[RMDB]
RNA sequence: GGGAACGACUCGAGUAGAGUCGAAAAGAUAUGGACGUAUGUUGAGGAUACUUCUCGGAAACGAGAAGAUCCAAUGAUGCUCUAUACGUCCUAAGUCAAAACACGAGAGGCUUCGGCCUCUCGUGAAUCUGCAUAACUUCUUCGGAAGUUAUGCAGAAAAAGAAACAACAACAACAAC
Reactivity to 2A3 in 0.01 (KOAc 150mM, MgCl2 10mM, bicine 150mM(pH8.5), 24C), signal-to-noise 2, nucleotides 027 to 126: g030a010u040a000u040g000g010a000c010g000u010a010u010g090u080u060g110a190g040g010a000u130a300c010u000u000c000u040c010g010g010a060a010a000c010g000a000g030a010a000g010a000u000c000c000a000a030u300g050a120u290g000c010u020c010u040a010u010a020c000g000u000c000c000u000a000a010g000u000c020a040a000a080a140c010a000c000g000a010g000a010g020g000c000u070u130c290g020g000c020c010u000c000u000c000g000u000g000a010a020
Reactivity to DMS in 0.01 (KOAc 150mM, MgCl2 10mM, bicine 150mM(pH8.5), 24C), signal-to-noise 2, nucleotides 027 to 126: g000a010u000a010u010g000g000a030c010g050u000a000u000g000u000u000g000a080g050g000a010u000a080c010u000u000c000u010c000g010g020a010a020a040c000g030a020g000a000a030g030a020u000c010c010a110a180u020g000a150u000g000c000u010c030u000a010u010a000c000g000u000c000c010u000a000a030g010u010c010a070a100a080a240c010a000c000g000a020g030a010g010g020c000u000u030c220g050g010c020c000u000c000u000c000g030u000g000a030a020
The record gives the reactivity of an RNA of 177 nucleotides to 2A3 and DMS. Source: RMDB library TTRDEL, as collected in RNAgym. The RNA was probed in 150 mM KOAc, 10 mM MgCl2 and 150 mM bicine (pH 8.5) at 24 C. Reactivities are rounded to 0.1 and cut off at 0 and 3.